[RMDB]
RNA sequence: GGGAACGACUCGAGUAGAGUCGAAAAACAACUGAACAGCGGGCGAGUGUUGGCCGCACUUCUACUCUGAGUGAACGCGGCAACUGAUAAACGCAACCGACACGGAUGCAACGGUGACCGACGCCGAGAUCGAGGCCUUCUUUGCUGAAGAGGCUGCCCUUAACCUAUGCUUCGGCAUAGGUUAAGGAAAAGAAACAACAACAACAAC
Reactivity to 2A3 in 0.01 (KOAc 150mM, MgCl2 10mM, bicine 150mM(pH8.5), 24C), signal-to-noise 2, nucleotides 027 to 156: a000c020a000a040c050u050g020a080a000c000a060g030c010g080g000g000c030g080a100g070u070g020u040u070g100g090c000c000g050c010a010c010u080u080c030u030a060c030u030c060u050g060a020g100u080g040a030a030c080g010c000g020g020c010a000a040c070u100g020a060u080a080a120a000c000g050c010a010a000c030c000g110a110c030a020c090g060g010a050u070g000c000a050a110c020g050g000u040g020a080c030c020g040a060c030g010c010c010g030a070g000a030u190c130g060a000g000g000c000c000u130u150c010u010u150u130g130c140u120g010a060a000g020a000g010g000c000u050g030c000